Structure probing data (2A3 and DMS) for a 177-nucleotide construct. For DMS the reverse transcriptase was MarathonRT. The DMS profile rests on 780 reads. High DMS reactivity at an A or C suggests that its Watson-Crick edge is free. It was measured as part of the RMDB library TTRDEL.

RNA sequence: GGGAACGACUCGAGUAGAGUCGAAAAGAUAUGGAGAAUCGAACCAGCGAGAGAUCGGAAACGAUGGAAUGCUGUGUUCAGAUUCUCCUAAGUCAAACAUACCUAGGACUUCGGUCCUAGGUAUGAAGGGUUUGUUUAAGUUCGCUUAAACAAACCCAAAAGAAACAACAACAACAAC
Reactivity to 2A3 in 0.01 (KOAc 150mM, MgCl2 10mM, bicine 150mM(pH8.5), 24C), signal-to-noise 1, nucleotides 027 to 126: g010a000u070a000u160g000g010a010g010a010a000u000c000g010a010a000c000c000a000g020c010g020a250g000a000g000a140u020c020g000g050a050a060a000c010g000a030u020g080g060a140a020u060g010c010u030g080u060g030u300u020c010a000g000a000u010u030c000u020c000c000u000a030a000g000u030c020a070a030a070c000a020u010a010c000c000u010a000g030g000a020c020u070u130c300g100g000u050c000c000u010a020g000g000u000a000u000g000a010a000
Reactivity to DMS in 0.01 (KOAc 150mM, MgCl2 10mM, bicine 150mM(pH8.5), 24C), signal-to-noise 1, nucleotides 027 to 126: g010a040u000a300u000g000g030a010g010a040a000u000c000g000a000a020c000c000a020g020c040g010a130g030a300g030a010u000c000g010g020a130a080a160c000g010a000u000g000g000a140a240u010g000c000u000g060u030g020u020u020c000a050g010a030u000u000c000u020c000c000u000a020a010g000u000c060a180a090a220c010a000u000a000c000c000u010a000g010g040a020c000u000u050c260g050g010u010c000c000u000a000g010g000u000a000u040g000a090a190